[RMDB]
RNA sequence: GGGAACGACUCGAGUAGAGUCGAAAAGAAGCGGGGACCGAAGAUCCGGAUCCCGUAGCUCCGGAAGAAGGGUCGGAGCCUGAACUUCCGGAAGUAGAUCUUCUGUGCCAAGAGAGCUUCAACGAAGGGGGAGAGUAGUAUUCGUACUACUCUCCCCAAAAGAAACAACAACAACAAC
Reactivity to DMS in 0.01 (KOAc 150mM, MgCl2 10mM, bicine 150mM(pH8.5), 24C), signal-to-noise 1, nucleotides 027 to 126: g010a030a010g000c040g020g050g000g010a080c000c080g000a040a070g000a130u000c040c000g010g010a130u000c020c010c000g010u000a090g010c120u000c000c000g010g000a000a100g000a070a240g000g000g040u010c150g000g000a190g000c000c010u000g000a230a300c030u000u000c000c000g010g000a040a040g000u020a130g010a050u000c000u020u000c000u000g000u000g000c010c000a180a130g000a180g000a220g000c010u000u000c000a150a160c220g000a060a110g010